[RMDB]
RNA sequence: GGGAACGACUCGAGUAGAGUCGAAAACAAGAGACUAGUAGGUUAGCUGCGUUGUGUUAGCCUUGCUGGCUGGCGCGACAUCGCGGCGAAUUUUAAAUAAGUCAGCUAUAGGUGUAGAGCUGCAUGUAGCAGGGGUGAUGGACAGGAGUUCGAUUCUAUCAUUUUCAAUGUUCGCAUUGAAAAUGAUAAAAGAAACAACAACAACAAC
Reactivity to DMS in 0.01 (KOAc 150mM, MgCl2 10mM, bicine 150mM(pH8.5), 24C), signal-to-noise 2, nucleotides 027 to 156: c060a060a130g010a150g020a080c030u010a130g030u010a030g020g020u000u000a070g000c000u000g000c030g000u000u010g010u010g000u010u000a060g010c010c010u000u010g060c160u020g030g000c000u000g000g040c000g010c040g020a070c030a060u000c040g000c040g040g040c000g000a010a010u000u010u000u030a010a090a110u000a050a100g000u000c030a070g020c050u000a090u000a040g010g020u000g010u000a090g000a130g000c030u000g010c020a060u000g030u000a070g060c040a050g000g040g010g030u010g000a060u000g000g010a050c060a060g020g010a080g020u000u010c050g000a220u000u010c010u000
Reactivity to 2A3 in 0.01 (KOAc 150mM, MgCl2 10mM, bicine 150mM(pH8.5), 24C), signal-to-noise 6, nucleotides 027 to 156: c030a030a030g050a000g030a080c050u070a040g080u030a040g040g120u120u090a020g000c010u020g000c020g010u020u030g010u030g020u070u100a010g000c000c010u040u210g040c070u050g010g000c000u000g010g000c000g000c010g030a020c010a040u050c020g000c010g010g010c020g010a010a010u080u150u080u180a050a080a060u090a040a010g020u050c010a010g000c030u060a060u070a180g030g010u060g030u060a040g000a010g040c030u030g020c050a040u140g040u100a020g000c030a020g000g020g000g030u040g020a040u050g010g020a020c050a050g020g030a060g030u040u080c040g030a050u080u000c000u020